[RMDB]
RNA sequence: GGGAACGACUCGAGUAGAGUCGAAAAAACUUACUUUGUUAUACAAGUAAUUAAAAUCUAUCCCGGGGUCAAGUAUGAUGAUUGGAGCCGAAUGGCCUAGAAAAUGCAUCCGUUCCGUCCUCGGAGAGGUCUUCUCGGUAUUCGUACCGAGAAGACCAAAAGAAACAACAACAACAAC
Reactivity to DMS in 0.01 (KOAc 150mM, MgCl2 10mM, bicine 150mM(pH8.5), 24C), signal-to-noise 1, nucleotides 027 to 126: a030a030c180u000u040a050c000u000u000u010g000u010u050a060u030a290c050a000a020g000u000a000a040u030u030a030a000a070a010u000c080u030a190u050c000c000c000g010g020g030g000u040c100a040a050g020u090a090u030g010a000u030g000a150u030u000g000g000a220g030c000c010g030a090a110u020g030g030c000c120u010a020g010a140a000a100a030u020g030c040a000u000c000c030g000u000u010c010c000g040u040c010c010u050c010g050g010a060g000a130
Reactivity to 2A3 in 0.01 (KOAc 150mM, MgCl2 10mM, bicine 150mM(pH8.5), 24C), signal-to-noise 2, nucleotides 027 to 126: a000a000c050u050u010a050c040u090u060u030g070u090u160a140u050a150c000a060a000g000u000a000a050u040u150a120a020a000a020u070c060u060a050u070c000c010c010g000g000g000g030u080c040a160a080g020u150a090u150g000a000u000g000a000u000u120g110g000a030g000c020c030g230a200a120u300g000g030c000c010u010a020g090a040a070a030a040u250g030c000a000u000c000c000g080u060u020c050c020g010u020c020c000u000c000g020g010a080g000a060